[RMDB]
RNA sequence: GGGAACGACUCGAGUAGAGUCGAAAAUAAGGACGCUCAGGACAUCCUGAAUCAGAUUAUCCUUCUGGGUAAGAAUGGCUACACUCCUGUAGGCUCAUUCGAUAACGGCGGAACUGUGCGUCUUCAGGCCGGAUGUAAUGUUCGCAUUACAUCCGGCAAAAGAAACAACAACAACAAC
Reactivity to 2A3 in 0.01 (KOAc 150mM, MgCl2 10mM, bicine 150mM(pH8.5), 24C), signal-to-noise 3, nucleotides 027 to 126: u300a030a050g040g000a000c000g000c000u010c020a010g050g000a070c040a070u080c020c010u020g000a020a060u060c020a000g110a110u040u070a020u220c010c010u120u130c060u180g000g000g030u030a020a020g000a020a020u010g020g000c000u030a000c070a030c070u110c030c150u070g020u020a030g220g000c080u080c170a000u020u010c000g010a010u040a100a060c040g010g020c040g040g010a010a010c000u000g000u000g030c030g000u000c000u000u020c030a030g140
Reactivity to DMS in 0.01 (KOAc 150mM, MgCl2 10mM, bicine 150mM(pH8.5), 24C), signal-to-noise 1, nucleotides 027 to 126: u000a000a010g000g000a030c000g000c000u000c050a000g010g100a300c010a140u000c000c000u000g000a300a050u000c000a080g000a190u000u000a000u100c010c100u030u000c260u000g000g050g030u030a220a000g000a040a000u000g050g000c010u000a000c000a050c210u080c300c140u000g070u060a000g030g000c030u010c000a000u000u080c000g090a070u000a080a170c210g050g000c300g000g000a000a180c010u000g010u000g000c050g000u000c000u040u000c080a000g000